[RMDB]
RNA sequence: GGGAACGACUCGAGUAGAGUCGAAAAGUCGCCUCCUUCGGGAGGCGACAAAUACUGAGACUACGCAACUCUGAAAAACACAACAAAAGUGUAAAAGCGUAGAAACAUCCACGUUCGCGUGGAUGAACUAAGAGCUGAUGUUCGCAUCAGCUCUUAGAAAAGAAACAACAACAACAAC
Reactivity to DMS in 0.01 (KOAc 150mM, MgCl2 10mM, bicine 150mM(pH8.5), 24C), signal-to-noise 1, nucleotides 027 to 126: g000u010c000g000c000c000u020c000c030u010u000c230g040g000g040a000g050g020c010g050a020c020a000a040a020u000a170c190u000g000a050g060a090c000u000a000c000g000c000a060a010c020u010c000u000g000a050a020a080a140a050c000a000c020a060a140c280a080a180a160a210g000u000g000u000a090a040a040a010g000c000g010u000a000g000a300a060a110c010a000u000c000c000a000c000g000u000u000c170g000c030g080u000g000g000a000u000g000a100a170

An RNA of 177 nucleotides, treated with DMS and read out base by base. Conditions: 150 mM KOAc, 10 mM MgCl2 and 150 mM bicine (pH 8.5), 24 C. The data come from the RNA Mapping Database (RMDB), library M2PK50. DMS adducts were read by reverse transcription with MarathonRT.